[RMDB]
RNA sequence: GGGAACGACUCGAGUAGAGUCGAAAACACAGGCCCUGCAUCGAGUUUUGGAGGAGAUGCUUCAGGCAGUGAUGAUUGUCCUGGUCACCUGGGAUGUGGCUGAUCUGUUUCAGUUAGGUCAUUUCUUCAGGUUAUUAGGAACUUAUAAAGUGGGGUAAAAUUAUCGUCCGUUCGCGGACGAUAAUUUAAAAGAAACAACAACAACAAC
Reactivity to 2A3 in 0.01 (KOAc 150mM, MgCl2 10mM, bicine 150mM(pH8.5), 24C), signal-to-noise 1, nucleotides 027 to 156: c070a000c010a020g070g000c010c000c010u000g030c030a080u030c010g040a090g030u090u160u260u140g100g010a100g000g030a110g030a100u150g100c000u090u110c060a030g000g010c030a040g030u010g070a050u050g020a040u040u220g010u020c000c000u000g000g020u000c000a000c000c000u010g010g000g000a020u010g000u020g020g000c000u010g010a020u050c000u010g180u130u210u250c010a020g020u060u250a000g030g000u000c010a020u000u050u030c000u160u220c020a000g010g000u010u010a000u000u010a000g000g000a040a000c020u060u090a030u090a290a130a010g050u090g030g020g000g000u010a000
Chemical mapping of a 207-nucleotide RNA with 2A3. The 2A3 profile rests on 638 reads. 2A3 adducts were read by reverse transcription with SuperScript II with manganese.